[RMDB]
RNA sequence: GGGAACGACUCGAGUAGAGUCGAAAACUCUCUAAAUAGCAAUAUUUACCUUUGGAGGGAAAAGUUAUCAGGCAUGCACCUGGUAGCUAGUCUUUAAACCAAUAGAUUGCAUCGGUUUAAAAGGCAAGACCGUCAAAUUGCGGGAAAGGGGUCAACACCCAUUUCCCUUCUUCGGAAGGGAAAUGGGAAAAGAAACAACAACAACAAC
Reactivity to 2A3 in 0.01 (KOAc 150mM, MgCl2 10mM, bicine 150mM(pH8.5), 24C), signal-to-noise 2, nucleotides 027 to 156: c030u000c000u010c010u120a090a040a100u160a120g000c000a000a120u100a110u190u210u110a200c010c030u110u110u060g060g000a020g040g050g060a070a090a000a000g010u010u000a010u020c000a000g000g050c160a130u130g030c000a060c060c000u020g000g010u000a010g000c010u000a000g030u000c000u030u020u040a030a020a020c060c030a070a100u020a200g200a260u040u250g030c000a050u090c060g000g060u000u000u060a040a190a050a040g010g010c000a000a030g050a040c030c000g030u020c010a080a190a290u050u170g000c010g000g020g000a010a140a040g020g030g000g010u070c030a020a020c010a060